Structure probing data (2A3 and DMS) for a 207-nucleotide construct.
The RNA was probed in 150 mM KOAc, 10 mM MgCl2 and 150 mM bicine (pH 8.5) at 24 C.
DMS adducts were read by reverse transcription with MarathonRT.
For 2A3 the reverse transcriptase was SuperScript II with manganese.
RNA sequence: GGGAACGACUCGAGUAGAGUCGAAAAAACGAGCCUGGACGAGGUUACUUUGUCUAGAAGACAGGCAGAAGUGCUUAGACAGAAAGCAUCUCAACUUUCCAAGCUAGUCAACAAGAGCCAAAACAUACCUACUAGAGUUGGUAGGGUUUUGGACUGCGAGUCAUUUCAUAUUCGUAUGAAAUGACUCAAAAGAAACAACAACAACAAC
Reactivity to 2A3 in 0.01 (KOAc 150mM, MgCl2 10mM, bicine 150mM(pH8.5), 24C), signal-to-noise 5, nucleotides 027 to 156: a000a020c020g010a010g010c010c010u020g010g010a010c030g040a030g050g000u030u070a050c000u050u070u060g030u010c010u030a060g060a160a020g060a130c060a020g010g030c020a010g070a130a020g030u040g010c000u050u060a020g040a060c040a010g090a020a040a020g010c030a080u010c020u000c030a040a140c030u100u080u000c010c000a010a010g010c010u050a020g060u100c040a020a060c040a130a060g060a040g190c020c000a000a010a000a000c000a050u170a090c010c020u020a020c010u040a070g090a090g300u120u100g060g010u000a000g040g030g000u010u000u000u000g010g010a070c010u030g030c080
Reactivity to DMS in 0.01 (KOAc 150mM, MgCl2 10mM, bicine 150mM(pH8.5), 24C), signal-to-noise 3, nucleotides 027 to 156: a030a060c000g030a100g020c040c030u000g010g000a070c210g010a090g030g060u000u010a040c050u010u000u000g030u010c000u010a070g010a180a200g010a180c080a080g030g010c030a100g050a120a220g010u010g000c060u000u000a060g030a200c070a090g000a090a070a040g020c080a100u000c010u000c010a000a030c030u010u010u000c020c010a000a090g040c020u000a050g020u000c030a070a060c080a080a150g010a130g000c010c000a020a020a020a050c040a080u000a300c030c000u020a100c040u000a140g010a170g030u000u000g030g020u000a020g010g000g010u000u000u020u000g020g020a100c040u010g000c230